RNA sequence: GGGAACGACUCGAGUAGAGUCGAAAAUCCUUCCUUUUCGAAGGAAGGACAGUGCACAGUCUUCGCAUCUGUGAAUCACACAACAGCCGUGUCUAAGCGAGGUUUUAAUCAAGUUCGCUUGAUUAAAGCCAAUCCAAGAGUUCGCUCUUGGAUUGGCAAAAGAAACAACAACAACAAC
Reactivity to DMS in 0.01 (KOAc 150mM, MgCl2 10mM, bicine 150mM(pH8.5), 24C), signal-to-noise 2, nucleotides 027 to 126: u010c000c010u000u010c000c000u010u000u020u000c150g010a000a000g010g000a010a020g000g010a000c130a030g010u000g000c010a030c030a010g010u000c070u000u000c060g000c060a160u000c020u000g010u000g010a060a080u000c110a130c070a050c060a100a110c140a130g010c030c020g020u000g010u010c110u010a060a100g000c020g010a070g000g000u000u000u000u000a000a010u000c010a010a010g000u000u010c260g000c000u000u000g000a010u000u000a010a010a040
Reactivity to 2A3 in 0.01 (KOAc 150mM, MgCl2 10mM, bicine 150mM(pH8.5), 24C), signal-to-noise 2, nucleotides 027 to 126: u020c010c000u020u000c000c000u020u070u010u120c240g100a000a010g000g000a000a000g010g000a000c040a040g040u060g000c020a010c000a010g040u010c070u100u070c130g010c060a110u030c050u000g030u030g050a070a060u080c040a010c000a000c030a160a110c010a070g100c030c000g080u080g030u080c040u100a110a040g020c000g010a010g030g010u000u000u010u060a010a000u010c000a000a000g010u010u070c140g040c090u000u000g000a000u000u010a020a010a000
This 177-nucleotide RNA was probed chemically with DMS and 2A3. The reactions ran in a buffer of 150 mM KOAc, 10 mM MgCl2 and 150 mM bicine (pH 8.5), at 24 C.